RNA sequence: GGGAACGACUCGAGUAGAGUCGAAAAGCGCACACAGGCUUUAUCUGCGUGUGAAAUAGCGGUCGGCAGCUGUGGCGGAGUGUCGAUGUCUCUAGUGGGUGCUCGCGUGGCUCAAUGUGGAGGUGGGAUCACGUCCUGAGUUCGCUCAGGACGUGAUAAAAGAAACAACAACAACAAC
Reactivity to 2A3 in 0.01 (KOAc 150mM, MgCl2 10mM, bicine 150mM(pH8.5), 24C), signal-to-noise 3, nucleotides 027 to 126: g010c020g010c020a010c000a000c000a010g040g050c060u040u190u150a210u230c080u050g000c010g000u070g010u050g040a040a080a040u180a010g010c010g000g000u050c010g040g000c020a080g000c070u050g000u060g080g030c070g070g020a080g030u090g040u050c040g050a050u110g040u010c000u020c000u040a000g030u050g040g020g010u050g010c050u050c020g020c010g010u010g020g000c000u010c040a000a210u090g030u040g020g050a060g000g070u100g040g000g040
Reactivity to DMS in 0.01 (KOAc 150mM, MgCl2 10mM, bicine 150mM(pH8.5), 24C), signal-to-noise 1, nucleotides 027 to 126: g070c000g040c000a030c010a060c010a020g000g010c300u020u010u010a120u010c030u000g000c020g000u000g010u000g000a060a050a150u000a050g000c120g010g020u000c030g010g000c070a030g020c100u010g000u010g000g010c010g030g040a090g010u000g010u000c080g000a070u010g000u000c010u010c110u000a110g000u010g010g010g000u000g020c030u000c030g000c040g000u040g000g000c050u000c110a000a120u010g000u010g000g000a120g000g000u000g000g000g000
An RNA of 177 nucleotides, treated with 2A3 and DMS and read out base by base. High DMS reactivity at an A or C suggests that its Watson-Crick edge is free. Conditions: 150 mM KOAc, 10 mM MgCl2 and 150 mM bicine (pH 8.5), 24 C.